The record gives the reactivity of an RNA of 177 nucleotides to 2A3 and DMS.

[RMDB]
RNA sequence: GGGAACGACUCGAGUAGAGUCGAAAAACACAUAUUGUUAGAAGCACCUCGCAUCUGCAAGUUCUCUUAAGCAAAAUACUUGCAUUAGGUCUCAGCUGGGGCUGUGCACCAGGCAGUUCGGAGGAAUUUUUGUAUUUAUGUUCGCAUAAAUACAAAAAAAAGAAACAACAACAACAAC
Reactivity to 2A3 in 0.01 (KOAc 150mM, MgCl2 10mM, bicine 150mM(pH8.5), 24C), signal-to-noise 9, nucleotides 027 to 126: a000c090a000c040a060u150a070u170u180g060u070u090a070g020a160a020g040c030a030c020c010u010c020g020c040a070u040c020u050g000c030a060a040g020u070u010c050u010c000u060u120a070a020g040c020a010a060a060a070u150a140c060u020u030g000c010a040u020u110a040g000g020u010c010u010c020a030g010c030u110g020g040g170g000c010u010g030u040g000c010a030c020c010a010g050g000c000a020g010u060u050c040g070g010a030g010g070a040a030u010
Reactivity to DMS in 0.01 (KOAc 150mM, MgCl2 10mM, bicine 150mM(pH8.5), 24C), signal-to-noise 7, nucleotides 027 to 126: a090c060a090c160a100u020a110u010u010g000u000u000a060g010a150a120g010c080a080c040c030u000c080g010c060a070u020c060u000g000c030a050a040g000u010u010c050u000c040u010u020a100a110g000c110a040a060a100a080u020a060c100u000u010g010c010a050u020u010a060g000g000u000c010u000c030a040g010c030u010g020g010g010g020c020u010g020u000g010c090a050c040c020a080g010g000c030a030g010u010u000c080g000g000a070g010g010a070a050u000
Conditions: 150 mM KOAc, 10 mM MgCl2 and 150 mM bicine (pH 8.5), 24 C. The data come from the RNA Mapping Database (RMDB), libraries RFM100 and RFMREP.